[RMDB]
RNA sequence: GGGAACGACUCGAGUAGAGUCGAAAAAGGUGAAAUCGAGCGCGACGACUGGAUUGUGUUGUCGGCGUUGCCAUCUGACGUUUUGGUGGGGCCGAGAGCCGACCUGUGGGGGCAGGUGCUGCGACGGGAUUCUUUCCACGUUCGCGUGGAAAGAAUCAAAAGAAACAACAACAACAAC
Reactivity to 2A3 in 0.01 (KOAc 150mM, MgCl2 10mM, bicine 150mM(pH8.5), 24C), signal-to-noise 3, nucleotides 027 to 126: a000g160g000u070g050a060a020a060u170c070g020a060g080c030g000c030g050a040c020g010a040c040u040g000g080a230u130u150g060u050g010u140u050g040u000c030g070g000c030g040u010u090g010c010c000a030u070c030u070g110a120c090g070u020u030u100u080g030g000u050g020g020g030g000c020c020g050a040g000a010g050c000c010g040a060c000c000u040g030u140g070g000g000g000g000c020a010g030g040u010g000c020u050g000c030g080a050c060g000g030
Reactivity to DMS in 0.01 (KOAc 150mM, MgCl2 10mM, bicine 150mM(pH8.5), 24C), signal-to-noise 1, nucleotides 027 to 126: a070g010g000u000g000a010a070a020u010c050g010a060g030c020g000c020g010a050c060g010a090c010u010g050g000a140u010u040g010u010g030u010u000g000u000c000g000g020c010g000u000u000g000c000c010a030u000c110u020g000a090c150g020u020u010u010u000g010g080u020g010g000g000g010c010c000g000a050g020a090g000c000c060g040a020c030c030u000g000u020g010g010g010g030g050c060a050g020g020u010g000c050u010g010c080g020a090c070g000g000